Structure probing data (2A3 and DMS) for a 177-nucleotide construct. The reactions ran in a buffer of 150 mM KOAc, 10 mM MgCl2 and 150 mM bicine (pH 8.5), at 24 C. The 2A3 profile rests on 3,432 reads.
RNA sequence: GGGAACGACUCGAGUAGAGUCGAAAACAUAGACGGGUGGGAUUACGAACUUUCCGCCGAGGCCUUUACACCAUGUAUACAAGUCCUUAGCGAAACGAUUGAAUUUCUCAGGUCCGUAUGCAAUGUCCACUCCAUAGCGAUUCGUCGCUAUGGAGUGAAAAGAAACAACAACAACAAC
Reactivity to 2A3 in 0.01 (KOAc 150mM, MgCl2 10mM, bicine 150mM(pH8.5), 24C), signal-to-noise 3, nucleotides 027 to 126: c010a020u120a040g240a080c010g000g030g030u040g000g010g010a040u050u140a070c050g040a060a060c010u040u020u020c050c050g000c000c000g000a020g010g000c000c000u020u040u050a030c030a040c060c110a140u230g040u060a070u030a070c060a080a000g010u050c000c000u000u000a000g000c020g020a020a000a020c040g030a040u000u120g030a150a190u030u070u050c020u000c000a010g080g000u020c010c000g020u020a020u050g000c050a090a070u090g040u030c030
Reactivity to DMS in 0.01 (KOAc 150mM, MgCl2 10mM, bicine 150mM(pH8.5), 24C), signal-to-noise 3, nucleotides 027 to 126: c040a050u000a080g010a070c010g020g000g050u010g010g000g000a030u000u000a120c100g000a070a060c040u000u010u000c030c030g020c010c020g000a000g000g010c090c130u000u000u000a050c030a150c180c200a130u010g000u000a080u000a080c270a030a030g020u010c000c000u000u000a060g010c020g000a010a010a020c110g010a090u000u000g020a120a060u000u000u000c000u000c030a050g000g000u000c020c040g000u000a010u000g000c090a110a050u000g010u010c050